This 177-nucleotide RNA was probed chemically with 2A3 and DMS. The DMS profile rests on 1,472 reads. Conditions: 150 mM KOAc, 10 mM MgCl2 and 150 mM bicine (pH 8.5), 24 C. For 2A3 the reverse transcriptase was SuperScript II with manganese. Values cover nucleotides 27 to 126.
RNA sequence: GGGAACGACUCGAGUAGAGUCGAAAAGAAAAUGGUACGAACGGUUCCAAAGGAGCCGAAGUUCAAUGCUAAGGCAUCGAUCUAAAAUCGUAUCAAAAAGGUAACGAGCUUGGCAAUGAACAAAAAAGUACUCAGUUUAGUUCGCUAAACUGAGUACAAAAGAAACAACAACAACAAC
Reactivity to 2A3 in 0.01 (KOAc 150mM, MgCl2 10mM, bicine 150mM(pH8.5), 24C), signal-to-noise 2, nucleotides 027 to 126: g030a010a110a010a030u100g020g000u130a010c040g030a140a010c000g020g010u000u000c050c030a290a150a140g030g000a010g000c000c030g000a020a010g000u010u000c020a010a030u020g000c000u020a080a080g100g010c010a100u020c010g030a000u000c010u180a030a060a030a120u050c050g040u040a030u120c000a090a030a040a020a000g030g000u010a080a030c020g000a000g050c040u030u030g020g000c020a070a090u060g040a020a010c070a060a080a050a000a020a010
Reactivity to DMS in 0.01 (KOAc 150mM, MgCl2 10mM, bicine 150mM(pH8.5), 24C), signal-to-noise 2, nucleotides 027 to 126: g010a120a110a080a100u010g000g010u000a000c020g020a070a210c020g010g050u000u000c000c000a100a070a270g020g000a010g010c020c020g000a110a040g010u000u000c000a030a010u000g020c000u010a130a100g000g000c000a020u010c020g000a030u000c030u010a080a070a180a140u000c030g000u000a000u010c050a020a060a110a120a050g020g000u010a090a140c030g000a100g010c030u000u000g000g000c010a060a060u000g010a020a030c050a010a010a070a040a050a070